[RMDB]
RNA sequence: GGGAACGACUCGAGUAGAGUCGAAAAUCUUGUCCGACCACAAGAAGUUGUUCGCAUACAAUUUUGGUGUGAUCUUUCUAGAGUUUGGCUCCUGCACGAAGUACUCAUAGCCCUGCUUCUCCGCAAAAGGAGAAGAUUACUUCGGUAAUCUUCUCCUAAAAGAAACAACAACAACAAC
Reactivity to DMS in 0.01 (KOAc 150mM, MgCl2 10mM, bicine 150mM(pH8.5), 24C), signal-to-noise 4, nucleotides 027 to 126: u010c030u000u010g010u000c060c050g000a080c050c140a090c030a110a140g010a050a060g010u000u000g000u000u000c150g000c120a090u010a100c080a050a120u000u010u010u000g020g020u010g020u000g010a060u000c020u000u000u010c040u000a110g010a070g010u000u000u000g020g010c030u000c040c010u010g030c050a040c080g010a060a070g000u000a070c070u000c050a070u010a130g010c050c020c030u000g000c060u000u000c020u000c040c050g010c170a060a060a070
Reactivity to 2A3 in 0.01 (KOAc 150mM, MgCl2 10mM, bicine 150mM(pH8.5), 24C), signal-to-noise 3, nucleotides 027 to 126: u020c010u030u080g010u010c020c050g030a050c000c000a030c030a060a010g020a060a040g020u060u060g030u050u090c050g010c090a060u200a210c050a160a140u080u120u120u200g080g000u040g010u020g030a010u010c010u000u130u020c030u090a050g010a030g130u030u090u130g050g000c010u020c000c010u040g000c040a010c060g050a050a020g010u050a020c020u010c040a040u090a030g030c010c000c010u020g040c010u060u010c030u040c030c010g090c050a040a050a060
An RNA of 177 nucleotides, treated with DMS and 2A3 and read out base by base.
Values are in units of 0.01, from 0 to 300, in steps of 10.
The RNA was probed in 150 mM KOAc, 10 mM MgCl2 and 150 mM bicine (pH 8.5) at 24 C.
For DMS, 3,992 sequencing reads were counted.
Values cover nucleotides 27 to 126.